RNA sequence: GGGAACGACUCGAGUAGAGUCGAAAACUGCUGUAUAACAUGCCGUGGUUCAACUCAGACCGGCACCGGGAGGCCAUGUGCGUCUACCGGGUAGAGCCCUUCAGGAUGCUGGCCUUCAGGCCAAACCUGGCGACGCCCUCGGAGGCGCACCUAGAGGUGCUAGGAUAACAUUCGUGUUAUCCUAGCAAAAAGAAACAACAACAACAAC
Reactivity to 2A3 in 0.01 (KOAc 150mM, MgCl2 10mM, bicine 150mM(pH8.5), 24C), signal-to-noise 3, nucleotides 027 to 156: c010u050g040c020u060g070u100a130u070a200a070c070a070u090g020c020c030g080u140g040g090u120u090c080a070a060c080u070c120a050g030a080c010c030g030g000c020a020c030c040g070g010g010a080g030g050c020c020a070u100g010u020g020c020g010u020c000u110a300c020c000g000g030g000u060a050g010a020g020c000c040c000u040u060c000a010g010g040a140u120g110c120u020g020g030c040c010u180u300c150a170g000g000c000c000a020a030a040c000c010u010g000g010c020g020a060c050g030c000c020c000u020c010g000g010a000g000g010c010g000c000a000c000c000u100a060g030a010g060g060
Reactivity to DMS in 0.01 (KOAc 150mM, MgCl2 10mM, bicine 150mM(pH8.5), 24C), signal-to-noise 2, nucleotides 027 to 156: c030u000g010c010u020g010u000a090u020a040a120c060a300u000g010c020c000g030u000g010g100u000u010c030a080a080c060u000c050a150g020a080c100c030g010g010c050a070c020c020g000g000g020a120g030g000c020c010a090u010g020u020g000c050g000u000c000u000a100c010c020g010g010g040u010a040g020a130g000c000c020c060u000u010c020a030g010g010a110u000g030c110u010g010g000c010c020u000u000c240a090g010g020c020c020a020a090a090c000c000u020g010g010c220g000a100c030g010c010c040c010u000c070g000g000a090g010g000c010g020c010a030c040c080u010a020g020a120g010g010